[RMDB]
RNA sequence: GGGAACGACUCGAGUAGAGUCGAAAAAAGUUGGACCAGGUACGGAUACCAGACGUUGCCAAACAGGGUGACAUGAGGAUCACCCAUGUACUGUCCCUUGGCAGCCGUACCUGGUGCUGGUGAAAAAGUGCAGGUAGUGUUUCGACACUACCUGCACAAAAGAAACAACAACAACAAC
Reactivity to DMS in 0.01 (KOAc 150mM, MgCl2 10mM, bicine 150mM(pH8.5), 24C), signal-to-noise 1, nucleotides 027 to 126: a070a120g000u000u000g030g000a080c030c030a000g020g020u000a020c040g000g000a140u000a100c050c070a110g010a110c110g030u040u000g050c040c010a040a010a040c090a070g010g000g000u000g010a000c000a090u010g030a120g010g010a190u010c060a010c010c020c010a030u000g030u000a080c110u010g000u000c000c010c020u030u000g010g030c000a060g010c000c070g000u010a000c000c000u030g000g000u000g040c040u020g080g020u010g010a070a020a070a100a000